[RMDB]
An RNA of 207 nucleotides, treated with DMS and read out base by base. The data come from the RNA Mapping Database (RMDB), library RNAMAK. The RNA was probed in 150 mM KOAc, 10 mM MgCl2 and 150 mM bicine (pH 8.5) at 24 C. The DMS profile rests on 2,564 reads.
RNA sequence: GGGAACGACUCGAGUAGAGUCGAAAACGUUUGGUUCGCCAAACGAAAAAACCGUAGGCGAGUGAAUCCAAUAGCACUAUUAGGGUUCGAAAGAGCCCUAACGAAUGCUAUAACGAUUACUCGCCUAAACGGAAAAAACGUAGAUUCGUCUACGUAACAAAGGUGUCAGAUUCGUCUGACACCUUUGAAAAGAAACAACAACAACAAC
Reactivity to DMS in 0.01 (KOAc 150mM, MgCl2 10mM, bicine 150mM(pH8.5), 24C), signal-to-noise 1, nucleotides 027 to 156: c040g000u000u020u020g010g040u010u020c300g010c000c000a000a010a020c020g040a000a090a080a030a070a080c000c020g060u000a030g010g010c000g010a040g030u000g040a000a040u000c030c040a300a070u010a020g010c020a040c020u010a170u010u000a000g000g050g010u000u000c000g000a160a120a300g000a020g020c020c000c000u020a000a010c040g060a030a020u000g000c000u000a080u000a120a090c100g010a030u000u000a030c000u010c020g000c000c000u000a020a040a060c000g000g030a020a060a050a080a070a050c010g010u000a020g000a080u010u000c290g010u000c010u000a000c010g050u000a150a190